[RMDB]
RNA sequence: GGGAACGACUCGAGUAGAGUCGAAAAGUGACACUGUUCGCAGUGUCACAAAGUGCUGGAUCUAGAACCACAAUAACUAGAUCAAAGAUCUAGUCUAGAUCAAAAGCAUACAGUUCGCUGUAUGCAAUCUAUUGACAUGCUUCGGCAUGUCAAUAGAAAAAGAAACAACAACAACAAC
Reactivity to DMS in 0.01 (KOAc 150mM, MgCl2 10mM, bicine 150mM(pH8.5), 24C), signal-to-noise 4, nucleotides 027 to 126: g000u000g010a000c000a000c000u000g000u000u010c150g040c010a010g000u010g000u000c000a000c000a030a060a080g020u020g010c150u010g000g000a000u000c000u000a020g000a060a150c170c130a100c210a100a070u010a120a140c010u000a000g000a000u000c010a110a140a120g000a030u000c000u010a000g000u000c010u000a000g000a010u010c010a070a070a120a120g010c000a010u000a000c010a010g010u000u010c200g020c000u000g010u000a020u010g010c000a060a050
Reactivity to 2A3 in 0.01 (KOAc 150mM, MgCl2 10mM, bicine 150mM(pH8.5), 24C), signal-to-noise 3, nucleotides 027 to 126: g000u000g000a000c000a000c000u020g020u040u090c180g000c090a000g000u000g010u010c000a000c010a000a000a000g150u110g080c090u150g110g000a000u000c000u000a010g020a050a060c040c030a090c110a140a070u160a090a030c000u000a000g010a010u020c010a000a300a070g010a000u010c000u000a000g030u010c010u000a000g020a010u000c000a100a040a020a000g000c000a000u000a000c010a000g000u010u080c150g020c080u010g000u010a010u010g000c000a010a080
Conditions: 150 mM KOAc, 10 mM MgCl2 and 150 mM bicine (pH 8.5), 24 C. Structure probing data (DMS and 2A3) for a 177-nucleotide construct. For DMS, 3,229 sequencing reads were counted. It was measured as part of the RMDB library M2PK50. Values cover nucleotides 27 to 126. DMS adducts were read by reverse transcription with MarathonRT. The 2A3 profile rests on 4,691 reads. Reactivities are rounded to 0.1 and cut off at 0 and 3.